[RMDB]
RNA sequence: GGGAACGACUCGAGUAGAGUCGAAAACGGCGAGCGGCGAGAACCUUGCGGCCGCCGGUGGUUGCCAUGCGUGCACGGAAACCGUGGCGACGCUUGCGGACGAUCUUGGAUGGCUGAUAAGUGCGCAGCUAAAUGAGCCUUUCGAGGCUCAUUUAGCAAAAGAAACAACAACAACAAC
Reactivity to DMS in 0.01 (KOAc 150mM, MgCl2 10mM, bicine 150mM(pH8.5), 24C), signal-to-noise 3, nucleotides 027 to 126: c070g000g000c050g000a090g010c050g000g010c010g010a080g010a090a130c090c020u000u000g000c020g000g020c010c010g010c000c030g000g020u000g020g020u000u010g000c000c010a030u000g000c160g010u000g030c030a140c160g000g010a130a080a040c030c010g020u000g010g010c010g010a020c010g020c030u010u000g020c020g000g020a050c030g020a090u010c030u010u010g000g030a150u000g000g010c030u000g010a100u010a090a110g000u000g000c070g000c080a140
Reactivity to 2A3 in 0.01 (KOAc 150mM, MgCl2 10mM, bicine 150mM(pH8.5), 24C), signal-to-noise 3, nucleotides 027 to 126: c000g000g020c020g010a060g020c020g040g020c020g010a030g020a060a060c010c030u030u040g000c030g060g000c000c020g000c000c020g000g020u030g160g060u030u020g000c020c010a020u030g010c100g120u060g030c090a100c280g130g040a190a070a000c010c000g020u010g030g000c010g000a010c010g000c000u030u020g000c010g000g020a020c020g060a070u070c030u000u030g040g010a070u060g110g000c010u030g040a090u040a220a070g040u090g080c040g000c070a050